Conditions: 150 mM KOAc, 10 mM MgCl2 and 150 mM bicine (pH 8.5), 24 C. The record gives the reactivity of an RNA of 207 nucleotides to 2A3 and DMS. DMS adducts were read by reverse transcription with MarathonRT. For 2A3 the reverse transcriptase was SuperScript II with manganese. The data come from the RNA Mapping Database (RMDB), library M2RFPK.
[RMDB]
RNA sequence: GGGAACGACUCGAGUAGAGUCGAAAAUGGCGGGGGCGAAACAGGAUCGACAAGGGUGUAAAGAUCGCUCUUUUACGCGGCAUGAUACCACCGUUAUCGGGUCAACAGAGUAGUUGCAAAUGACAACAAAAGAAUCGCGCGUUCGCGCGCGAUUCAACUAAAUGAGAGUCUUCGGACUCUCAUUUAGAAAAGAAACAACAACAACAAC
Reactivity to 2A3 in 0.01 (KOAc 150mM, MgCl2 10mM, bicine 150mM(pH8.5), 24C), signal-to-noise 2, nucleotides 027 to 156: u100g040g010c020g010g000g010g000g000c010g010a020a000a000c080a010g000g060a080u090c040g040a040c050a040a000g020g010g010u030g030u080a110a120a020g070a060u090c030g000c020u020c030u060u150u060u080a120c110g000c000g030g000c000a010u100g030a010u030a060c010c020a000c020c000g060u050u060a060u100c050g000g000g010u020c000a020a020c050a060g140a020g050u160a000g010u040u030g000c020a020a160a290u170g020a150c040a080a010c010a010a200a030a010g020a000a000u000c010g010c040g000c010g080u030u060c200g030c000g040c000g010c000g080a000u000u000c000a010a000
Reactivity to DMS in 0.01 (KOAc 150mM, MgCl2 10mM, bicine 150mM(pH8.5), 24C), signal-to-noise 1, nucleotides 027 to 156: u000g030g040c060g040g070g030g010g030c050g000a100a070a080c080a090g030g030a080u000c010g050a070c090a100a040g030g040g000u000g000u010a040a050a090g010a080u010c040g020c020u000c050u000u030u000u010a070c090g020c060g010g000c010a050u020g010a060u000a120c030c020a070c000c010g020u000u010a050u010c080g000g030g030u000c020a100a170c130a120g000a140g030u010a150g020u010u010g000c000a090a090a070u000g020a060c060a020a130c090a040a050a050a040g000a010a030u000c030g050c000g110c000g040u000u000c300g030c020g050c010g050c000g000a010u000u010c000a040a120